[RMDB]
RNA sequence: GGGAACGACUCGAGUAGAGUCGAAAAACGUUGAUAUGUAUUUACUCCGAGGAGACGAACUACCACGAACAGGGGAAACUCUACCCGUGGCGUCUCCGUUUGACGAGUAAGUCCUAAGUCAACAUGCACGGAAAUCACUUCGGUGAUUUCAAAAGAAACAACAACAACAAC
Reactivity to 2A3 in 0.01 (KOAc 150mM, MgCl2 10mM, bicine 150mM(pH8.5), 24C), signal-to-noise 9, nucleotides 027 to 129: a010c090g000u000u000g000a000u000a010u060g000u000a010u000u000u000a000c000u000c000c010g020a050g010g000a000g040a010c010g000a040a030c070u200a080c190c000a000c000g030a060a010c040a100g000g000g000g000a000a000a000c010u020c000u020a030c010c010c000g000u000g010g000c000g000u010c000u000c000c000g000u020u050u050g010a000c000g000a000g000u000a000a000g000u000c000c000u020a040a010g010u000c000a000a010c010a030u160g070c070a070c100g090
Reactivity to DMS in 0.01 (KOAc 150mM, MgCl2 10mM, bicine 150mM(pH8.5), 24C), signal-to-noise 8, nucleotides 027 to 129: a070c210g010u000u000g010a000u000a130u090g000u090a040u000u000u000a000c040u050c010c030g000a060g030g020a040g020a010c000g000a100a050c080u060a270c030c030a000c020g030a040a240c120a110g030g000g000g020a070a030a130c020u000c000u020a140c220c140c000g030u010g000g000c010g030u000c000u000c000c040g020u000u010u020g030a160c300g010a000g030u000a000a000g020u040c000c020u040a030a110g020u010c020a000a000c040a020u100g060c180a090c190g050